Overview:
Structure probing data (DMS and 2A3) for a 207-nucleotide construct. Source: RMDB library OK3TST, as collected in RNAgym. Conditions: 150 mM KOAc, 10 mM MgCl2 and 150 mM bicine (pH 8.5), 24 C. For 2A3, 621 sequencing reads were counted. Values cover nucleotides 27 to 156. DMS adducts were read by reverse transcription with MarathonRT.
[RMDB]
RNA sequence: GGGAACGACUCGAGUAGAGUCGAAAAUGGAAUCAGCCUGUGUUUGUUUGGGCCCCGAGAGUUUGUGUGCGGCCGCCAACACGUUUUCUGCGCAGUGUGUGGCCGUUACCGGGGCCAGGCGAAAUGUGAUUUGUUUAUCCUGUCAGAGGGGAACCCAGCUAAUAAAUGGUUUCGACCAUUUAUUAGCAAAAGAAACAACAACAACAAC
Reactivity to DMS in 0.01 (KOAc 150mM, MgCl2 10mM, bicine 150mM(pH8.5), 24C), signal-to-noise 1, nucleotides 027 to 156: u000g000g000a180a070u000c020a140g040c010c020u000g020u000g040u000u020u010g000u010u000u020g040g060g010c020c010c020c040g000a160g030a230g000u000u000u010g030u010g030u010g010c000g030g020c000c020g010c010c010a050a000c020a020c000g000u000u000u000u000c300u040g020c020g020c020a070g010u020g010u020g010u000g020g010c000c000g020u000u000a050c010c040g000g000g060g030c000c010a010g000g070c030g000a030a050a080u010g000u000g010a070u000u000u000g010u000u000u000a160u000c030c000u010g010u000c130a140g000a200g000g010g030g000a060a130c020c030c020a210
Reactivity to 2A3 in 0.01 (KOAc 150mM, MgCl2 10mM, bicine 150mM(pH8.5), 24C), signal-to-noise 1, nucleotides 027 to 156: u100g020g010a010a080u020c030a030g050c000c000u050g020u020g010u040u020u100g020u000u080u060g060g020g000c020c000c000c020g130a110g000a060g170u120u300u300g070u090g020u030g030c000g010g010c010c010g000c040c030a060a000c010a020c000g020u040u060u190u140c230u240g000c080g000c070a120g010u020g020u000g000u000g050g010c010c000g000u010u060a000c010c000g000g020g000g000c000c000a000g030g020c010g020a030a040a080u140g000u040g050a100u060u020u000g010u060u070u050a070u040c020c000u010g150u200c030a020g050a050g170g000g000g000a030a040c000c020c000a010